[RMDB]
RNA sequence: GGGAACGACUCGAGUAGAGUCGAAAAAUAUUACCGAAGCUGUGGAUGACACGUUAGUGUCAUGGUAGGAGAGCGUUCUAUGUGUGAAGAAGGUGUACCGUGAGGAGCGCUGGAACACAUAGAAGUGGACUCCACGGAUAUUCGUAUCCGUGGAGUCAAAAGAAACAACAACAACAAC
Reactivity to 2A3 in 0.01 (KOAc 150mM, MgCl2 10mM, bicine 150mM(pH8.5), 24C), signal-to-noise 1, nucleotides 027 to 126: a040u090a020u110u050a070c030c000g010a080a000g000c020u050g010u040g230g070a010u020g000a000c000a010c020g110u150u220a010g000u010g020u000c000a010u040g020g020u070a040g020g130a060g040a000g040c050g000u000u000c000u000a030u000g010u000g010u020g120a120a090g030a040a040g040g000u000g000u100a270c020c030g020u080g060a020g000g020a060g000c010g020c040u000g040g050a040a000c020a000c000a000u000a020g020a030a010g100u100g070
Reactivity to DMS in 0.01 (KOAc 150mM, MgCl2 10mM, bicine 150mM(pH8.5), 24C), signal-to-noise 2, nucleotides 027 to 126: a160u020a120u000u010a080c000c040g030a120a170g090c040u020g020u000g020g010a040u000g010a000c000a000c010g050u020u020a080g010u010g000u000c000a010u000g030g040u000a050g000g020a120g000a090g010c050g000u000u010c000u060a030u000g010u000g000u000g000a130a080g000a160a090g000g030u000g020u000a220c000c040g000u000g030a250g020g070a300g040c000g000c010u000g010g000a070a060c020a000c000a000u010a030g020a010a010g000u000g010